Background: Chemical mapping of a 177-nucleotide RNA with DMS and 2A3. Reactivities are given for positions 27 through 126. The data come from the RNA Mapping Database (RMDB), library TTRDEL. The 2A3 profile rests on 5,484 reads.
RNA sequence: GGGAACGACUCGAGUAGAGUCGAAAAGAUAUGGAAUUAUCGGGAGGCUAUUCUGGUCGGAAACGACCAUUAGAGCCGAGGAUCGAGUAAUUCCUAAGUCAAACAACUGGCCUUCGGGCCAGUUGAAGUUAGCAAUACUGUUCGCAGUAUUGCUAACAAAAGAAACAACAACAACAAC
Reactivity to DMS in 0.01 (KOAc 150mM, MgCl2 10mM, bicine 150mM(pH8.5), 24C), signal-to-noise 3, nucleotides 027 to 126: g000a030u010a240u010g010g010a020a010u000u000a020u000c010g010g000g010a040g020g010c000u000a050u000u010c160u000g010g020u000c000g030g000a060a050a110c010g000a010c000c000a020u010u010a050g020a050g010c000c000g010a060g020g010a020u010c000g000a040g010u000a010a010u000u000c000c000u020a040a110g010u000c010a130a150a300c000a010a010c000u000g000g000c000c000u000u020c270g040g010g010c000c010a000g000u000u000g010a030a090
Reactivity to 2A3 in 0.01 (KOAc 150mM, MgCl2 10mM, bicine 150mM(pH8.5), 24C), signal-to-noise 2, nucleotides 027 to 126: g000a010u000a010u050g000g000a020a000u020u010a000u020c000g000g000g000a000g000g000c020u030a080u250u120c140u160g000g020u020c020g010g040a050a000a000c000g010a000c000c020a010u040u050a080g120a020g010c000c010g010a070g000g010a010u000c010g000a020g170u070a010a000u000u000c010c000u000a050a000g030u010c030a070a130a200c000a040a040c010u000g000g030c000c020u070u070c300g080g020g000c000c000a000g000u000u000g010a020a020